Background
This 177-nucleotide RNA was probed chemically with 2A3 and DMS. The DMS profile rests on 2,817 reads. For DMS the reverse transcriptase was MarathonRT. In probing experiments dimethyl sulfate is read out at A N1 and C N3, which are open when not base-paired. It was measured as part of the RMDB libraries RFM100 and RFMREP.
[RMDB]
RNA sequence: GGGAACGACUCGAGUAGAGUCGAAAAACACCUUACGAGGUGACCAGGCCUUCGGCAGAGGAGGGCUGUUCUUCCCUUGGGUUUUAUGACUGGGAGGAACUAGCCUUCUCUCUGCUUAGGAGUGGAAGCUCUUGGUACAUUUCGAUGUACCAAGAGCAAAAGAAACAACAACAACAAC
Reactivity to 2A3 in 0.01 (KOAc 150mM, MgCl2 10mM, bicine 150mM(pH8.5), 24C), signal-to-noise 3, nucleotides 027 to 126: a000c010a020c000c000u030u000a070c230g110a000g010g000u020g030a030c000c020a080g090g100c000c010u030u080c060g010g000c000a020g000a000g000g000a000g010g020g000c010u000g000u000u000c010u010u020c000c000c040u070u150g130g000g030u130u070u090u110a290u300g080a060c030u060g020g000g000a000g010g000a000a010c000u030a000g000c010c000u000u010c000u010c000u010c000u000g000c000u000u000a000g000g000a000g020u050g060g070a160a040
Reactivity to DMS in 0.01 (KOAc 150mM, MgCl2 10mM, bicine 150mM(pH8.5), 24C), signal-to-noise 1, nucleotides 027 to 126: a130c020a050c000c000u000u020a160c170g000a000g030g010u000g010a190c000c020a070g000g000c000c010u000u050c150g000g000c000a050g000a010g010g010a000g060g010g000c000u000g000u000u000c010u000u000c000c000c010u050u010g050g000g000u000u010u030u070a120u080g010a040c010u040g020g000g000a060g000g000a020a010c000u010a000g000c000c000u030u000c000u070c000u000c000u000g010c010u000u020a030g000g000a030g000u060g000g000a290a110